Chemical mapping of a 207-nucleotide RNA with 2A3. 2A3 adducts were read by reverse transcription with SuperScript II with manganese. Reactivities are given for positions 27 through 156. The 2A3 profile rests on 2,784 reads.
RNA sequence: GGGAACGACUCGAGUAGAGUCGAAAAGGGGUCACGCGAGCCAUCCCACCUUCGACGAUCUAUACUGAAGCCUCCACGGUAUAGGGAGAAGGUGGAUGGCGAUGAGCGUGACGGAGGCACCCAAAGAUCUUUUGAUAGUUCGCUAUCAAAAGAUCAACGAGAGAGGAAGGUUCGCCUUCCUCUCUCGAAAAGAAACAACAACAACAAC
Reactivity to 2A3 in 0.01 (KOAc 150mM, MgCl2 10mM, bicine 150mM(pH8.5), 24C), signal-to-noise 2, nucleotides 027 to 156: g060g010g080g020u000c000a000c010g020c050g060a030g020c020c010a010u070c050c040c020a020c000c000u030u010c030g300a300c010g000a030u010c000u000a000u010a010c010u020g070a100a020g010c010c000u000c000c000a010c020g000g000u000a010u000a000g000g000g000a010g000a010a000g020g000u000g000g000a000u000g000g020c040g010a040u140g040a010g000c000g000u000g000a000c000g010g000a000g000g000c000a050c130c000c000a050a060a020g000a000u000c000u010u000u010u000g000a000u000a020g000u040u080c250g010c220u000a000u000c000a000a000a000a000g010a000u010c000a010a030